RNA sequence: GGGAACGACUCGAGUAGAGUCGAAAAUAUUACAUCUUCGGAUGUAAUAACUGGUGGUGGCUGGCUUGUUGCUAGUGGCGCAACUGUAGCCAUGACUGCGCAAUCGCUCUGAAUUCGUUCAGAGCAAACUGUGAAUAAAAUUCGUUUUAUUCACAGUAAAAGAAACAACAACAACAAC
Reactivity to DMS in 0.01 (KOAc 150mM, MgCl2 10mM, bicine 150mM(pH8.5), 24C), signal-to-noise 9, nucleotides 027 to 126: u000a010u000u000a000c000a010u000c000u000u010c210g030g010a010u000g000u000a000a000u000a020a130c120u010g010g030u000g010g040u000g000g010c040u000g010g020c050u000u000g010u000u000g010c000u000a140g030u000g020g010c170g010c010a020a030c030u000g010u010a040g010c010c010a020u000g000a080c030u000g010c090g010c160a110a080u010c140g000c000u000c000u000g000a020a030u000u010c200g010u000u000c000a010g000a010g010c000a020a020
Reactivity to 2A3 in 0.01 (KOAc 150mM, MgCl2 10mM, bicine 150mM(pH8.5), 24C), signal-to-noise 9, nucleotides 027 to 126: u030a000u000u010a000c000a000u000c010u040u040c210g110g000a010u000g000u000a000a000u010a020a050c080u110g070g020u030g040g010u020g030g010c030u010g040g030c050u080u140g020u010u020g010c010u050a090g190u090g280g030c070g000c020a010a030c020u070g050u140a000g000c000c010a020u030g100a040c010u030g010c080g000c080a040a120u120c100g000c000u000c000u000g020a020a020u050u070c180g040u070u000c020a000g000a010g000c000a000a000

Record summary
Chemical mapping of a 177-nucleotide RNA with DMS and 2A3. For 2A3, 25,420 sequencing reads were counted. For DMS the reverse transcriptase was MarathonRT.